[RMDB]
RNA sequence: GGGAACGACUCGAGUAGAGUCGAAAAGCGGACAAGGUCAGGCGGGAGGGCAACGUUUAAAAUCACGGGCUGCCAGGCGUCGCGCUCCGCCAGUUUUCGGGAAUAGCCGCGGGCAACCAGAAAACCGGAUCGUAUUGGAUUUCGAUCCAAUACGAUCAAAAGAAACAACAACAACAAC
Reactivity to 2A3 in 0.01 (KOAc 150mM, MgCl2 10mM, bicine 150mM(pH8.5), 24C), signal-to-noise 4, nucleotides 027 to 126: g040c020g000g020a040c070a120a080g080g070u070c040a020g040g000c050g070g060g010a110g040g080g000c000a050a000c010g000u030u070u190a130a110a030a060u180c100a050c110g030g020g000c030u020g020c030c000a000g020g000c000g020u040c020g000c020g010c000u000c010c000g000c010c000a000g000u020u020u030u100c040g020g000g010a080a080u050a090g020c000c010g030c040g020g030g010c010a010a010c010c000a000g070a010a040a000a020c010c020g090
Reactivity to DMS in 0.01 (KOAc 150mM, MgCl2 10mM, bicine 150mM(pH8.5), 24C), signal-to-noise 2, nucleotides 027 to 126: g000c010g000g000a070c080a090a100g000g010u010c080a110g000g030c020g030g010g020a090g010g000g000c030a080a030c050g060u010u000u040a070a040a050a090u000c060a080c070g000g030g030c040u000g020c020c100a040g000g000c050g040u020c060g010c050g000c030u000c000c050g010c020c000a090g010u020u000u000u010c070g000g000g000a080a140u020a080g010c040c020g020c140g000g010g020c060a090a060c030c000a030g000a040a060a070a100c050c160g010
Source: RMDB libraries RFM100 and RFMREP, as collected in RNAgym. Chemical mapping of a 177-nucleotide RNA with 2A3 and DMS. DMS adducts were read by reverse transcription with MarathonRT. The RNA was probed in 150 mM KOAc, 10 mM MgCl2 and 150 mM bicine (pH 8.5) at 24 C.